[RMDB]
RNA sequence: GGGAACGACUCGAGUAGAGUCGAAAAGUGUGCUAAGAGAUGUGUCUGUUACUGAUGCAUGCUUCGCAAACAAAUUUAAUCAAUUUGAUCAAUGGUAUGAGUCUACAUUUGGUCUUGCCUAUUACCACGACUAGGUCGGAUUCGUCCGACCUAGUCGAAAAGAAACAACAACAACAAC
Reactivity to 2A3 in 0.01 (KOAc 150mM, MgCl2 10mM, bicine 150mM(pH8.5), 24C), signal-to-noise 1, nucleotides 027 to 126: g050u030g000u000g020c000u040a040a010g010a010g020a020u000g000u000g030u020c020u050g120u280u130a170c130u160g020a020u020g000c010a000u010g070c000u020u000c040g040c060a060a090a030c010a000a040a110u110u150u170a090a030u100c090a040a080u110u040u120g040a020u040c040a000a080u140g090g030u080a040u220g040a050g130u100c050u060a040c030a120u120u050u090g000g000u020c110u000u020g040c000c010u070a110u020u150a060c040c040a030
Reactivity to DMS in 0.01 (KOAc 150mM, MgCl2 10mM, bicine 150mM(pH8.5), 24C), signal-to-noise 1, nucleotides 027 to 126: g050u000g000u020g020c000u020a110a060g000a100g010a020u000g040u000g000u000c030u000g020u000u030a120c270u000g000a030u000g000c000a010u000g020c020u000u000c100g020c020a020a050a080c000a030a030a130u010u010u000a140a110u020c130a060a120u000u000u000g010a040u010c060a000a030u000g020g000u000a050u000g020a080g030u010c160u000a010c120a040u000u010u000g050g000u000c000u000u000g010c070c060u000a090u000u000a140c110c080a180